[RMDB]
RNA sequence: GGGAACGACUCGAGUAGAGUCGAAAAUUGCUUUCAGCGCUCUUCAGAUCUCUGAAAAGAGUCGGUGCAUUCAUUAAAGCUACGUAAUGCGACGAUCUUGUUUGCAGCUGAUACCGCAUCGCUCGGGUCCGCCGGUCUAGUUCGCUAGACCGGCGGAAAAAGAAACAACAACAACAAC
Reactivity to 2A3 in 0.01 (KOAc 150mM, MgCl2 10mM, bicine 150mM(pH8.5), 24C), signal-to-noise 1, nucleotides 027 to 126: u100u000g010c000u000u000u110c030a030g000c030g000c000u010c000u080u000c000a010g000a300u030c300u000c000u210g000a000a000a080a000g000a000g030u050c000g140g000u040g000c000a000u000u000c060a110u120u110a290a090a000g070c000u050a030c060g040u080a030a140u000g010c000g050a000c010g010a030u050c010u000u140g050u120u130u020g000c140a130g030c000u000g000a000u090a050c170c100g000c000a000u040c060g000c150u000c000g000g000g000